[RMDB]
RNA sequence: GGGAACGACUCGAGUAGAGUCGAAAACGUCUGGCUGUGUUAACUGGGUAUAACAUGAAUGUGUGUAUCUGUGUGUGUCUGUACAUAUCUGAGUGUGGGUAUCUAGCCAUGUUUCAUCUGUGUUAACCACAUGAGUGACUUUCGAGUCACUCAUGUGAAAAGAAACAACAACAACAAC
Reactivity to DMS in 0.01 (KOAc 150mM, MgCl2 10mM, bicine 150mM(pH8.5), 24C), signal-to-noise 4, nucleotides 027 to 126: c100g000u000c050u010g010g010c050u000g010u000g010u000u010a060a090c060u000g010g000g020u000a050u010a090a060c040a040u000g000a130a060u020g010u000g010u000g010u010a030u010c060u000g020u010g030u000g010u010g010u000c040u000g000u000a050c060a050u010a060u000c060u000g000a110g020u010g000u000g000g000g020u010a040u000c070u000a070g010c040c030a060u010g000u000u000u010c080a070u000c080u000g010u000g000u000u010a060a100c140
Reactivity to 2A3 in 0.01 (KOAc 150mM, MgCl2 10mM, bicine 150mM(pH8.5), 24C), signal-to-noise 3, nucleotides 027 to 126: c020g060u000c040u050g060g000c020u020g040u010g010u170u050a020a020c020u040g050g000g040u070a070u020a110a030c030a060u100g150a230a040u120g060u020g000u000g010u060a040u070c050u020g070u000g010u010g010u000g050u100c030u030g050u040a010c010a030u060a050u040c040u050g020a020g040u070g000u040g020g070g030u040a050u050c040u020a020g010c000c010a030u040g040u000u040u030c050a080u000c050u050g110u000g010u140u050a050a050c020